[RMDB]
RNA sequence: GGGAACGACUCGAGUAGAGUCGAAAAAAAGAUAUGGAUUGUCUUGUCAGUCCGUAGUACGCCGAGACUACUCGGAAACGAGUAGUUAUCGUACGCGGACUUGGAUUUAGACAAUCCUAAGUCAAAACCUUAUGUCGUAGUUCGCUACGACAUAAGGAAAAGAAACAACAACAACAAC
Reactivity to DMS in 0.01 (KOAc 150mM, MgCl2 10mM, bicine 150mM(pH8.5), 24C), signal-to-noise 3, nucleotides 027 to 126: a070a100a090g000a040u010a300u010g000g000a010u000u000g010u000c000u000u000g000u000c010a040g010u000c020c000g010u010a080g050u000a000c010g040c300c210g000a150g000a040c000u000a000c000u000c000g010g000a070a090a140c000g020a000g020u000a010g010u000u000a040u020c010g010u000a000c000g000c000g000g010a020c010u000u000g020g000a000u000u010u000a010g010a010c000a000a000u010c000c000u000a010a080g040u000c020a090a040a110a150
Reactivity to 2A3 in 0.01 (KOAc 150mM, MgCl2 10mM, bicine 150mM(pH8.5), 24C), signal-to-noise 3, nucleotides 027 to 126: a000a010a010g080a040u100a050u140g000g000a000u010u000g000u010c010u020u030g010u020c010a020g000u000c010c000g000u060a210g000u010a020c040g060c150c130g200a170g020a090c000u000a000c000u010c000g030g040a100a080a030c010g000a000g000u000a000g000u000u030a090u050c010g000u000a000c000g000c020g020g000a000c000u010u090g030g000a030u300u240u070a010g000a010c000a010a000u000c010c000u000a060a010g030u010c020a010a020a100a160
An RNA of 177 nucleotides, treated with DMS and 2A3 and read out base by base. The RNA was probed in 150 mM KOAc, 10 mM MgCl2 and 150 mM bicine (pH 8.5) at 24 C. For DMS the reverse transcriptase was MarathonRT. The data come from the RNA Mapping Database (RMDB), library TTRDES.